[RMDB]
Structure probing data (DMS and 2A3) for a 177-nucleotide construct. For DMS, 1,130 sequencing reads were counted. Values cover nucleotides 27 to 126. The RNA was probed in 150 mM KOAc, 10 mM MgCl2 and 150 mM bicine (pH 8.5) at 24 C.
RNA sequence: GGGAACGACUCGAGUAGAGUCGAAAAUUUGUCUACUCGAUUCAACUAAACGAAAUUUUGUCCUUCAGCACACAUGUCUAUGUGUGCUGAAGUGAAAUUGGAAUUUCGCUAGGUUUGCUUAGUAGCUCAUAGGAAAGACGUUCGCGUCUUUCCUAUGAAAAGAAACAACAACAACAAC
Reactivity to DMS in 0.01 (KOAc 150mM, MgCl2 10mM, bicine 150mM(pH8.5), 24C), signal-to-noise 1, nucleotides 027 to 126: u010u020u020g000u000c000u000a030c000u000c090g010a070u000u010c070a120a150c010u000a050a110a110c000g000a010a010a030u000u000u000u000g000u000c020c000u010u000c000a000g000c010a030c000a000c000a010u000g010u010c230u020a020u000g020u000g000u010g000c000u000g000a000a000g000u010g020a000a070a190u020u010g010g000a010a020u000u000u000c010g010c030u000a260g010g000u000u020u000g000c230u000u000a070g030u000a070g010c090u000
Reactivity to 2A3 in 0.01 (KOAc 150mM, MgCl2 10mM, bicine 150mM(pH8.5), 24C), signal-to-noise 2, nucleotides 027 to 126: u100u050u160g040u000c010u010a000c010u000c040g040a020u060u050c010a010a030c000u060a040a020a040c010g010a010a020a010u050u030u060u080g050u020c000c000u000u010c010a020g000c000a000c000a000c000a000u060g200u280c170u300a020u000g010u030g000u000g000c010u000g000a000a000g010u010g020a000a000a010u140u110g040g020a010a010u010u000u000c000g000c010u020a030g000g080u020u040u110g050c020u060u060a020g030u090a000g090c020u020